[RMDB]
The record gives the reactivity of an RNA of 177 nucleotides to 2A3.
RNA sequence: GGGAACGACUCGAGUAGAGUCGAAAAUUGGAGCCAUUGUGGCUCAGGCCGGUUGCGCCUGCCCUCGGGCCCUCACGGAGGCGGGGGUUCCAGGGCACGAGUUCGAGGCCAGCCUGGUCCACAUGGGCCAACGACUAGGCUUCGGCCUAGUCGUUGGAAAAGAAACAACAACAACAAC
Reactivity to 2A3 in 0.01 (KOAc 150mM, MgCl2 10mM, bicine 150mM(pH8.5), 24C), signal-to-noise 2, nucleotides 027 to 126: u110u080g110g030a080g090c030c010a030u040u200g010u030g000g000c020u000c000a000g010g020c010c010g030g040u050u110g010c020g000c050c000u000g010c000c000c000u020c050g000g000g010c010c000c000u010c000a120c020g110g070a040g100g110c070g010g030g000g000g010u060u070c000c000a000g000g010g000c010a010c080g120a140g010u070u220c010g030a020g040g030c000c000a000g000c010c000u000g000g000u020c010c000a000c000a000u030g000g000g030
Values are in units of 0.01, from 0 to 300, in steps of 10.